[RMDB]
Structure probing data (2A3 and DMS) for a 207-nucleotide construct. DMS adducts were read by reverse transcription with MarathonRT. It was measured as part of the RMDB library M2RFPK. For 2A3 the reverse transcriptase was SuperScript II with manganese.
RNA sequence: GGGAACGACUCGAGUAGAGUCGAAAAUUGAGCCUCCGAUUCGCCGUCGGCAUUUCCCCAGCAGCCAUGACCUACCAGGCUGCGGUGCGGCUCGCCGCACAGGUCAUCCCUCAUCGGGCGCGUCCUGGAUAGGGCUAUACUUUCGAGUAUAGCCCAAUAGCAUGUACUAGUUCGCUAGUACAUGCUAAAAAGAAACAACAACAACAAC
Reactivity to 2A3 in 0.01 (KOAc 150mM, MgCl2 10mM, bicine 150mM(pH8.5), 24C), signal-to-noise 2, nucleotides 027 to 156: u050u090g000a000g030c000c010u000c000c010g040a060u110u120c100g040c130c060g030u010c010g000g070c110a090u030u010u020c010c010c010c000a040g050c000a000g020c050c040a090u050g010a020c000c000u040a130c050c040a000g010g000c010u010g010c010g000g000u050g000c050g040g010c020u030c040g000c010c000g070c000a000c010a010g000g030u020c010a090u120c010c010c000u080c040a190u170c130g000g000g020c030g020c050g030u070c000c000u030g020g010a060u120a120g010g020g000c010u010a000u010a010c030u020u080u140c190g110a000g020u000a000u000a000g010c010c000c000a000a000
Reactivity to DMS in 0.01 (KOAc 150mM, MgCl2 10mM, bicine 150mM(pH8.5), 24C), signal-to-noise 1, nucleotides 027 to 156: u030u020g000a110g000c040c000u020c020c030g000a100u000u000c060g030c120c140g000u000c030g000g010c160a120u010u000u000c000c010c010c070a180g030c020a100g040c030c000a130u000g030a120c010c030u000a140c100c040a090g030g030c040u010g080c030g010g000u000g020c020g010g010c060u010c180g020c020c000g000c010a050c000a010g030g020u000c030a100u000c000c000c010u000c120a130u000c080g000g020g040c050g020c000g020u000c000c040u010g010g010a170u010a110g000g000g000c000u020a010u000a020c000u000u000u010c300g000a060g040u010a000u010a020g010c000c000c000a020a010